The record gives the reactivity of an RNA of 207 nucleotides to 2A3. The 2A3 profile rests on 717 reads.
[RMDB]
RNA sequence: GGGAACGACUCGAGUAGAGUCGAAAAACUGAUACCUUACGAGGUAUCAGAAUGACUUCGUGGUAGAGCGCCACGAACGGAAAGUAAAGAAAGCUCGAUUGAAACGCACCGUGUACGCACGGUGCGAAAAAGUCGAUCCAGUUCGCUGGAUCGACAAUCUAUUUUCCGUGUUCGCACGGAAAAUAGAAAAAGAAACAACAACAACAAC
Reactivity to 2A3 in 0.01 (KOAc 150mM, MgCl2 10mM, bicine 150mM(pH8.5), 24C), signal-to-noise 1, nucleotides 027 to 156: a000c000u000g000a010u000a010c000c000u070u010a060c260g090a030g000g000u000a010u000c000a000g010a000a010u080g060a010c060u010u010c040g000u020g000g010u040a080g060a000g010c000g010c000c020a000c000g000a000a020c020g040g060a190a030a000g040u090a010a040a100g100a060a110a000g040c000u010c040g140a150u110u240g040a090a040a020c000g000c010a010c000c060g000u010g000u080a010c150g000c090a000c000g000g000u000g010c020g000a000a000a000a000a000g000u010c000g010a000u000c000c000a000g020u060u080c120g030c100u000g010g020a000u000c010g010a000c000a000a000